[RMDB]
RNA sequence: GGGAACGACUCGAGUAGAGUCGAAAAAAGUGUGGCAUCCAUGGCAGGGGAUCCUCUGUGGCUCUCUGGAAUCAGUACAUCCCAGGUUGACGUCUCCUUGGCUCUGGACUCAAAGUUAGUCUACCUGCUGGUCGUCUACAUCAGGGUGCUGUGCUGAGCUUUUAAUCGAGUUCGCUCGAUUAAAAGCAAAAGAAACAACAACAACAAC
Reactivity to 2A3 in 0.01 (KOAc 150mM, MgCl2 10mM, bicine 150mM(pH8.5), 24C), signal-to-noise 1, nucleotides 027 to 156: a000a020g070u070g000u020g030g000c020a020u030c060c010a080u090g090g010c030a010g080g000g030g010a040u120c020c020u010c030u020g130u090g050g000c020u030c010u000c000u060g100g000a080a030u010c000a010g000u070a010c020a080u210c030c020c010a020g000g080u010u030g030a020c020g020u020c060u040c050c020u040u070g010g000c000u000c030u020g010g030a020c010u030c070a180a160a090g050u100u080a020g010u100c050u040a070c060c020u040g060c060u050g040g000u020c040g010u010c000u100a040c040a090u130c030a050g040g050g000u070g000c070u000g000u000g000c000u000g000a000